[RMDB]
RNA sequence: GGGAACGACUCGAGUAGAGUCGAAAAUAGGUCGUGUUCGCACGACCUAAGAUUAAAUGCAUAAAAUGCCAGUAACCCGAAACACAAGGGAGUGCACCUGGCCUACGAUGUCGUUCGCGACAUCGAAUUGCUGAAAUAUCUUCGGAUAUUUCAGCAAAAAAGAAACAACAACAACAAC
Reactivity to DMS in 0.01 (KOAc 150mM, MgCl2 10mM, bicine 150mM(pH8.5), 24C), signal-to-noise 3, nucleotides 027 to 126: u000a000g000g020u000c000g030u010g000u000u000c220g000c020a000c000g000a010c000c000u000a000a010g010a130u010u010a050a110a110u000g000c050a090u000a080a020a100a150u010g000c010c020a010g000u020a120a080c010c000c010g000a080a070a170c160a060c280a160a190g000g010g010a130g000u000g020c040a070c200c010u000g000g010c020c230u000a080c010g000a010u000g010u000c010g040u000u010c250g020c020g000a000c020a000u000c000g010a040a060
Reactivity to 2A3 in 0.01 (KOAc 150mM, MgCl2 10mM, bicine 150mM(pH8.5), 24C), signal-to-noise 2, nucleotides 027 to 126: u070a000g000g000u000c000g010u000g000u030u080c180g060c070a000c000g000a000c000c000u010a000a000g010a000u120u120a050a060a090u110g000c000a010u190a300a230a040a020u090g020c000c000a000g010u060a160a150c030c000c010g030a150a200a000c040a030c020a060a060g020g010g000a050g050u040g060c040a040c060c000u020g020g020c000c000u030a050c030g000a000u010g000u000c000g010u010u020c170g020c000g060a000c000a000u000c010g000a060a080